[RMDB]
RNA sequence: GGGAACGACUCGAGUAGAGUCGAAAAUCGGGUUUCUUCGGAAACCCGAAAAUAAAAUCAGCGGUUAAAAAGCUCGCGUUAUAACCGCUGAACGCGUGCUUAAAAGAUCGCAGUUCGCUGCGAUCAAGAAUACGACAAGGUUCGCCUUGUCGUAUUCAAAAGAAACAACAACAACAAC
Reactivity to DMS in 0.01 (KOAc 150mM, MgCl2 10mM, bicine 150mM(pH8.5), 24C), signal-to-noise 2, nucleotides 027 to 126: u000c010g000g020g010u000u000u000c000u000u030c090g050g000a010a000a030c000c000c010g020a010a010a050a040u000a030a100a120a090u000c030a030g010c020g030g000u000u000a000a080a100a080a160g020c070u010c240g020c120g010u010u000a110u010a040a040c010c010g010c030u000g000a010a040c190g000c080g000u000g020c120u000u010a050a050a170a130g010a020u000c000g000c000a000g010u000u030c200g030c020u020g010c000g000a010u000c000a010a030
Reactivity to 2A3 in 0.01 (KOAc 150mM, MgCl2 10mM, bicine 150mM(pH8.5), 24C), signal-to-noise 1, nucleotides 027 to 126: u030c000g000g000g020u000u020u000c030u050u060c190g050g000a020a000a000c030c000c010g010a000a000a000a000u010a000a010a010a050u000c000a000g010c010g060g000u040u090a120a210a020a090a000g020c130u120c110g090c060g040u030u060a060u020a070a020c000c000g000c030u020g000a000a000c000g060c010g090u110g030c030u160u210a010a080a020a110g000a010u000c010g010c000a010g000u020u060c160g020c120u000g010c000g010a000u000c000a000a000

An RNA of 177 nucleotides, treated with DMS and 2A3 and read out base by base.
2A3 adducts were read by reverse transcription with SuperScript II with manganese.
It was measured as part of the RMDB library M2PK50.
Reactivities are given for positions 27 through 126.